[RMDB]
RNA sequence: GGGAACGACUCGAGUAGAGUCGAAAAUGCGCGCUGCACCCUGCUCGGCCAGGCGCUCCAGUUUCCAAGCCAUUCAAUCCCCGCCAUUUUGCCAAAGGAUAUUUUGGCCAAAAGCAGUGGAAGCCGAGACGCAAAAUACUUUCGAGUAUUUUGCGUCAAAAGAAACAACAACAACAAC
Reactivity to DMS in 0.01 (KOAc 150mM, MgCl2 10mM, bicine 150mM(pH8.5), 24C), signal-to-noise 2, nucleotides 027 to 126: u000g000c070g020c080g040c060u000g020c140a100c120c010c040u000g020c050u020c090g000g040c030c060a090g000g010c100g000c020u020c060c060a080g010u000u000u000c050c040a100a180g010c070c080a060u000u000c110a140a200u000c020c000c000c030g020c030c050a180u000u000u010u000g020c000c050a020a000a070g020g020a150u010a140u010u000u000u000g000g020c040c160a010a010a040a110g000c030a080g000u000g050g040a120a110g020c040c040g010a130
An RNA of 177 nucleotides, treated with DMS and read out base by base. Conditions: 150 mM KOAc, 10 mM MgCl2 and 150 mM bicine (pH 8.5), 24 C.